[RMDB]
RNA sequence: GGGAACGACUCGAGUAGAGUCGAAAAUUGCUCAGGCAGCGUAACGCUGCUUGAAAGACCACAUGAAAGUCCUGGCGGGUUAAGCGCCGCCAGGCGGGGUUCGAAGGCGCCUGGCAACAGAAGCCUCAUUACAUGGAAGACUUCGGUCUUCCAUGAAGAUUAGAGUUAUGUUCGCAUAACUCUAAUCAAAAGAAACAACAACAACAAC
Reactivity to 2A3 in 0.01 (KOAc 150mM, MgCl2 10mM, bicine 150mM(pH8.5), 24C), signal-to-noise 3, nucleotides 027 to 156: u070u080g010c000u000c010a000g010g000c000a000g010c010g040u090a110a030c230g000c000u010g010c010u000u000g000a000a010a010g030a020c000c050a060c030a130u180g140a160a030a020g300u000c000c000u010g000g000c010g020g020g020u050u090a120a070g050c120g060c050c000g000c000c000a000g010g010c020g000g000g010g000u040u280c100g040a040a070g000g000c010g020c000c000u030g260g000c010a030a000c000a030g000a010a000g000c000c010u000c000a000u050u120a020c000a010u000g000g010a000a000g000a000c000u030u030c240g080g000u000c010u000u000c010c000a010u000g000a010a020
Record summary:
The record gives the reactivity of an RNA of 207 nucleotides to 2A3. 2A3 adducts were read by reverse transcription with SuperScript II with manganese.